[RMDB]
RNA sequence: GGGAACGACUCGAGUAGAGUCGAAAAACGCUUCACAAUGUGCGGCAAAGAAACAUUGUUUAUGCAAAGGCACUUCGCAAUGUGUGCUCAAACAUUGCUUAUUCAAACCCGCUUCACAAUGUGCGACAAAACUUCACGGUCUUCGGACCGUGAAGAACUUGGACUUGUGGUUCGCCACAAGUCCAAGAAAAGAAACAACAACAACAAC
Reactivity to 2A3 in 0.01 (KOAc 150mM, MgCl2 10mM, bicine 150mM(pH8.5), 24C), signal-to-noise 1, nucleotides 027 to 156: a000c000g000c010u020u000c020a000c000a020a080u070g010u000g000c010g030g050c070a090a060a190g130a040a060a020c010a020u000u000g060u070u030u090a050u090g060c020a000a000a190g250g030c040a030c000u020u030c040g010c040a010a010u000g050u000g000u010g030c100u200c130a030a030a000c010a010u000u010g000c000u070u110a140u070u130c000a010a040a110c020c000c000g030c010u120u080c080a030c010a060a160u160g070u060g030c040g030a010c090a020a020a010a010c000u000u000c000a000c000g000g060u000c030u000u020c050g120g000a000c020c020g000u000g010a000a000g000a000a000
Chemical mapping of a 207-nucleotide RNA with 2A3.
Source: RMDB library M2RFPK, as collected in RNAgym.
The reactions ran in a buffer of 150 mM KOAc, 10 mM MgCl2 and 150 mM bicine (pH 8.5), at 24 C.